RNA sequence: GGGAACGACUCGAGUAGAGUCGAAAAGCUCUGACCUUCUUCCCAGUCUCGGUUCCUGUUCUGGGAGCUUGGGGCUGAGUAGCCACCAGCCCUGCUCUCUGCAGUGUUCUAUUGUGGAUUGCUUGUGCUGGGCGUUGGUAUUCGUACCAACGCCCAGAAAAGAAACAACAACAACAAC
Reactivity to 2A3 in 0.01 (KOAc 150mM, MgCl2 10mM, bicine 150mM(pH8.5), 24C), signal-to-noise 1, nucleotides 027 to 126: g040c000u040c040u120g200a180c000c050u040u040c010u030u010c020c000c000a020g000u040c010u000c040g010g000u050u000c000c000u050g010u130u200c090u100g020g010g000a000g010c000u100u190g000g000g000g000c000u000g000a020g000u050a040g050c020c070a090c000c030a000g000c000c000c000u010g000c030u000c010u000c000u000g050c040a020g020u000g110u180u100c110u070a150u160u070g020u020g020g020a160u040u040g020c030u040u000g030u070g090